[RMDB]
RNA sequence: GGGAACGACUCGAGUAGAGUCGAAAAGUCAAGAGUCAGUUGUCUGUGAAGAAAUGCAUGUUUGAGAGAUGUAAUCUUGGCAUACUGAAUGAAGGUGAAGCAAGGAUCCGCCACUGCGCAGCUACAGAAACUGGCUGCUUCAUUCUAAUAAAGGGAAACUCUAGACAUCGUUCGCGAUGUCUAGAGUAAAAGAAACAACAACAACAAC
Reactivity to 2A3 in 0.01 (KOAc 150mM, MgCl2 10mM, bicine 150mM(pH8.5), 24C), signal-to-noise 3, nucleotides 027 to 156: g090u060c020a020a010g030a010g080u000c010a000g010u000u000g170u190c050u030g060u030g060a060a090g040a030a190a020u120g000c000a020u060g110u100u160u120g150a140g000a010g000a020u040g050u160a100a080u050c010u000u060g000g000c010a040u080a110c070u060g030a030a050u140g030a070a040g030g000u030g020a060a000g040c050a030a000g080g000a060u070c070c020g070c060c020a100c130u080g020c100g000c060a030g030c000u030a010c020a030g080a050a070a000c000u000g010g000c000u000g000c000u000u030c010a050u060u040c010u100a080a140u120a140a130a070g000g000g000a000a150
Reactivity to DMS in 0.01 (KOAc 150mM, MgCl2 10mM, bicine 150mM(pH8.5), 24C), signal-to-noise 1, nucleotides 027 to 156: g040u020c040a080a150g000a120g000u010c040a020g000u000u000g010u000c000u010g040u010g000a170a160g010a080a100a070u000g010c050a060u000g010u000u010u000g040a090g000a050g010a080u020g010u000a110a090u000c020u000u010g030g010c010a140u000a160c050u000g010a050a120u010g030a130a090g000g040u000g000a060a080g020c010a120a120g000g000a010u000c000c000g000c050c010a070c030u000g010c110g000c050a190g040c040u020a200c040a060g000a040a040a060c010u000g000g030c000u020g000c010u010u000c020a050u000u000c020u010a140a070u010a040a110a100g010g000g000a080a080